Chemical mapping of a 177-nucleotide RNA with 2A3 and DMS. The 2A3 profile rests on 3,826 reads. The DMS profile rests on 2,020 reads. DMS adducts were read by reverse transcription with MarathonRT.

RNA sequence: GGGAACGACUCGAGUAGAGUCGAAAAGAUAUGGAGAAGUCAGCAACAGCCUGCUCUCGGAAACGAGAGUCAGGACAUGCUGUCACUCCUAAGUCAAAAGAGCGUAAGGGUUCGCCCUUACGCUCAACUCUUCCUUACCGUUCGCGGUAAGGAAGAGAAAAGAAACAACAACAACAAC
Reactivity to 2A3 in 0.01 (KOAc 150mM, MgCl2 10mM, bicine 150mM(pH8.5), 24C), signal-to-noise 2, nucleotides 027 to 126: g000a010u020a030u040g040g020a000g020a300a100g090u050c010a000g000c020a040a190c020a270g080c000c000u010g010c000u000c000u000c000g020g000a040a030a010c000g010a000g050a010g050u130c050a010g000g000a030c010a060u050g020c020u000g010u040c000a010c000u000c000c000u020a050a020g010u010c000a000a040a170a160g010a000g000c000g010u010a000a020g050g000g000u070u200c240g120c000c000c000u010u010a010c000g010c000u000c010a000a000
Reactivity to DMS in 0.01 (KOAc 150mM, MgCl2 10mM, bicine 150mM(pH8.5), 24C), signal-to-noise 2, nucleotides 027 to 126: g000a040u000a230u000g000g000a010g010a140a160g030u010c030a000g020c010a070a100c200a190g020c010c000u000g020c010u000c010u000c000g010g010a030a060a100c000g010a020g020a010g010u020c010a000g000g000a040c130a080u000g000c000u000g000u000c050a180c000u000c010c010u010a030a140g000u000c020a120a080a110a100g000a020g010c000g030u000a010a000g010g030g020u010u010c240g000c000c000c000u000u010a000c000g000c010u000c000a010a050
Source: RMDB library TTRDEL, as collected in RNAgym.